[RMDB]
Chemical mapping of a 177-nucleotide RNA with DMS and 2A3. 2A3 adducts were read by reverse transcription with SuperScript II with manganese. For 2A3, 1,172 sequencing reads were counted. For DMS, 1,089 sequencing reads were counted.
RNA sequence: GGGAACGACUCGAGUAGAGUCGAAAAUUUAAAUUUCCUGGAAAGUUCACAUUUAGUAUAUCAACAUCAUCAGGAAACCUUUCCAUGGCAUUCUCUAUUAUUGCUUUUAUAUAUGGCUCUGCAAGAACAUCCAGUACCCAUUCGUGGGUACUGGAUGAAAAGAAACAACAACAACAAC
Reactivity to DMS in 0.01 (KOAc 150mM, MgCl2 10mM, bicine 150mM(pH8.5), 24C), signal-to-noise 1, nucleotides 027 to 126: u030u070u070a010a010a110u010u010u000c000c000u000g000g000a040a090a020g010u000u030c190a090c100a230u000u090u040a080g000u100a020u010a070u000c220a120a030c050a130u000c250a050u020c040a000g000g000a020a060a090c190c030u000u040u020c000c000a180u040g060g000c160a080u000u000c020u000c080u060a070u000u000a080u000u000g020c020u020u000u000u000a100u050a030u040a080u020g000g000c040u030c000u000g000c030a070a130g000a070a050
Reactivity to 2A3 in 0.01 (KOAc 150mM, MgCl2 10mM, bicine 150mM(pH8.5), 24C), signal-to-noise 3, nucleotides 027 to 126: u050u040u070a040a100a070u040u010u000c000c020u000g000g070a040a270a000g040u090u150c060a040c100a230u220u300u280a050g030u100a090u070a090u300c070a070a120c020a040u170c000a000u010c030a030g040g030a000a050a000c010c020u010u010u000c000c000a030u090g010g000c050a030u000u040c020u000c030u100a080u220u100a110u120u190g040c080u100u090u050u020a140u130a080u050a090u140g020g000c000u010c020u050g040c020a070a040g020a160a050